[RMDB]
RNA sequence: GGGAACGACUCGAGUAGAGUCGAAAACUACCCGGUGGAAACAACUGAAGCUUCAACGCCUUUUUUUCCUAUCUUCUUUAGCACCGGGCUAGGGAGUAAGCCCGUGGAACCUUAGUUUUGUUCCCUCGGGACUUACUUGUGGUUCCUGUGGUGCACUAUCGGUGUUAUACUUCGGUAUAACACCGAUAAAAGAAACAACAACAACAAC
Reactivity to 2A3 in 0.01 (KOAc 150mM, MgCl2 10mM, bicine 150mM(pH8.5), 24C), signal-to-noise 1, nucleotides 027 to 156: c070u120a080c000c000c000g000g050u040g000g060a150a040a050c030a020a050c070u050g090a260a030g000c030u180u140c030a130a030c050g040c000c050u000u000u020u070u120u000u040c000c010u080a270u180c070u180u000c030u050u120u170a010g000c030a000c030c020g000g000g020c000u040a040g030g090g000a020g010u030a000a000g010c000c020c000g000u010g000g000a000a000c000c010u090u100a160g070u210u300u260u100g020u020u010c010c030c000u070c040g030g000g080a070c000u000u000a000c000u000u020g020u080g050g000u190u140c030c000u100g130u140g010g000u010g030c040a030c050u040
This 207-nucleotide RNA was probed chemically with 2A3. Values cover nucleotides 27 to 156. For 2A3 the reverse transcriptase was SuperScript II with manganese. The reactions ran in a buffer of 150 mM KOAc, 10 mM MgCl2 and 150 mM bicine (pH 8.5), at 24 C.